Chemical mapping of a 177-nucleotide RNA with DMS. The data come from the RNA Mapping Database (RMDB), library OK2TRN. For DMS, 2,627 sequencing reads were counted.

RNA sequence: GGGAACGACUCGAGUAGAGUCGAAAAAACAUAAACCCCCAUCUCUGCAAAAAAUUAAACAAGGAUUGGCUGGGCAUGGUGGCUCAUGCCUGUAGUCCCAGCUACAUGGGAGGCUGAGGUGGGAGGACAAAGGGACAGAAUUCGUUCUGUCCCUUUGAAAAGAAACAACAACAACAAC
Reactivity to DMS in 0.01 (KOAc 150mM, MgCl2 10mM, bicine 150mM(pH8.5), 24C), signal-to-noise 2, nucleotides 027 to 126: a070a030c090a060u020a090a090a190c040c000c000c000c010a020u020c010u000c000u010g020c090a020a060a050a070a020a070u020u000a060a080a080c140a090a090g010g000a110u000u000g000g010c000u010g030g010g020c010a020u000g000g010u000g010g010c050u000c050a010u000g010c000c010u010g000u020a070g010u010c000c000c010a030g010c010u010a090c040a060u000g020g010g010a080g000g010c010u000g010a020g010g030u000g000g000g010a050g010g000a150